[RMDB]
RNA sequence: GGGAACGACUCGAGUAGAGUCGAAAAUAACAGCGCCUGACGUCGGGCAGCAGCAAGUUCUUCGGAAGUAAGCGUAGCCAGAAUGUCGUCGACUUUGAAGGAUUCUGGGGAUGGCGAACGAGCGGCUUCUUCCUCAGCGGCGGCACGGUCGAUGUCGCAGCUAUAGGCAAUUCGUUGCCUAUAGCUGAAAAGAAACAACAACAACAAC
Reactivity to 2A3 in 0.01 (KOAc 150mM, MgCl2 10mM, bicine 150mM(pH8.5), 24C), signal-to-noise 4, nucleotides 027 to 156: u120a050a040c020a020g020c030g020c050c010u030g070a040c010g060u080c020g010g060g040c040a040g020c020a000g020c030a060a070g060u080u000c010u060u080c090g040g020a020a020g050u200a030a010g020c060g070u080a050g020c010c020a050g030a160a050u100g070u100c030g020u020c010g050a090c050u170u060u120g080a050a010g110g040a090u130u050c030u080g000g000g000g000a030u090g060g010c010g020a040a030c080g010a030g130c060g010g000c000u080u040c000u020u000c010c000u040c040a040g030c040g040g000c000g000g030c000a030c070g040g130u090c030g020a080u020g020u040c030g000
Reactivity to DMS in 0.01 (KOAc 150mM, MgCl2 10mM, bicine 150mM(pH8.5), 24C), signal-to-noise 1, nucleotides 027 to 156: u020a070a140c040a100g000c020g040c000c020u000g010a070c030g090u000c090g000g040g000c070a080g050c030a080g030c050a050a100g020u000u010c060u000u010c080g040g000a080a130g020u000a070a110g020c020g040u000a240g020c020c050a070g000a160a040u000g020u000c000g010u000c010g030a160c110u000u010u000g000a050a060g030g010a160u000u000c020u000g000g000g020g030a110u000g040g030c010g000a060a080c130g000a170g040c070g020g010c000u000u020c020u010u000c010c020u000c040a060g000c060g030g010c050g010g020c000a020c000g010g020u000c020g010a050u000g000u020c040g000